[RMDB]
RNA sequence: GGGAACGACUCGAGUAGAGUCGAAAAGAUAUGGAGUACAAGUUCUUUUGACGAGACCAUGUCGGAAACGACAUCCCUCUCGAUAAGAACUGUACUCCUAAGUCAAAGCUCUCCUUCGGGAGAGCAAUCUAAUUUAAGAGUUCGCUCUUAAAUUAGAAAAAGAAACAACAACAACAAC
Reactivity to 2A3 in 0.01 (KOAc 150mM, MgCl2 10mM, bicine 150mM(pH8.5), 24C), signal-to-noise 6, nucleotides 027 to 126: g040a010u050a030u130g000g000a000g010u010a040c090a300a210g000u070u010c040u070u220u220u290g300a180c090g010a000g000a000c030c100a030u020g000u000c010g000g000a050a050a020c010g010a000c000a010u040c040c040c010u020c000u000c010g120a150u070a300a040g000a010a000c010u000g000u010a000c000u000c000c000u000a020a000g010u000c020a060a080a100g010c000u000c010u010c010c010u030u120c300g130g010g010a000g010a000g000c000a000a010
Reactivity to DMS in 0.01 (KOAc 150mM, MgCl2 10mM, bicine 150mM(pH8.5), 24C), signal-to-noise 6, nucleotides 027 to 126: g000a060u000a300u000g000g000a020g020u000a000c000a050a120g000u000u000c000u000u000u000u010g020a210c110g020a010g010a030c180c230a010u000g010u000c000g010g000a080a080a130c010g020a010c000a010u000c130c100c110u000c000u000c000g010a150u010a010a010g010a010a000c010u000g010u000a000c000u000c000c000u000a000a060g000u000c020a110a140a170g010c000u000c000u000c000c000u000u010c260g030g010g000a010g020a010g010c000a010a020
Chemical mapping of a 177-nucleotide RNA with 2A3 and DMS.
For 2A3, 13,311 sequencing reads were counted.
Conditions: 150 mM KOAc, 10 mM MgCl2 and 150 mM bicine (pH 8.5), 24 C.
Values cover nucleotides 27 to 126.